RNA sequence: GGGAACGACUCGAGUAGAGUCGAAAACCGUGACAUUGCGAAAGCAAAGCUGGCGGUAGGUAGUCCUGGGCGGCGACAGCCUUGGACUGCGGCGUAAAGGUGUACCUGGGGCCGUUAAACCUAUCGUGAAAGGCAACUUGGUUCGCCAAGUUGCCAACUAUUUUCCACGGUUCGCCGUGGAAAAUAGAAAAGAAACAACAACAACAAC
Reactivity to DMS in 0.01 (KOAc 150mM, MgCl2 10mM, bicine 150mM(pH8.5), 24C), signal-to-noise 1, nucleotides 027 to 156: c020c020g040u010g060a070c120a140u000u000g000c010g020a240a240a170g100c040a050a100a120g000c020u010g020g020c040g010g000u010a010g000g020u000a050g000u000c000c020u000g000g020g050c020g010g040c030g000a110c230a170g020c010c000u000u000g000g000a020c010u000g010c000g050g020c010g030u000a160a220a030g010g020u000g020u000a110c030c000u000g010g040g010g020c020c000g000u000u000a070a190a100c000c000u020a050u000c040g000u000g020a040a120a070g000g000c000a020a020c000u000u020g000g000u000u000c300g030c010c000a020a110g030u010u000g020c000c050a020a040
Reactivity to 2A3 in 0.01 (KOAc 150mM, MgCl2 10mM, bicine 150mM(pH8.5), 24C), signal-to-noise 2, nucleotides 027 to 156: c010c010g020u060g080a020c100a160u060u100g010c000g080a140a020a020g040c050a090a090a000g040c080u120g110g000c040g010g000u000a000g000g000u000a010g000u000c020c010u020g020g010g000c000g090g000c080g050a050c100a060g010c000c000u000u010g020g010a000c000u000g010c000g010g000c010g040u100a030a080a000g040g000u180g110u270a150c000c000u030g000g000g130g000c030c010g010u000u120a160a180a030c000c000u010a010u010c000g000u040g010a080a030a000g000g020c000a000a000c000u010u010g040g030u040u060c180g040c110c010a000a000g000u000u000g000c000c000a000a000
Structure probing data (DMS and 2A3) for a 207-nucleotide construct.
Values cover nucleotides 27 to 156.
As a SHAPE reagent, 2A3 marks flexible, mostly unpaired nucleotides at the ribose 2'-OH.
For 2A3 the reverse transcriptase was SuperScript II with manganese.
The RNA was probed in 150 mM KOAc, 10 mM MgCl2 and 150 mM bicine (pH 8.5) at 24 C.
It was measured as part of the RMDB library M2RFPK.
For DMS the reverse transcriptase was MarathonRT.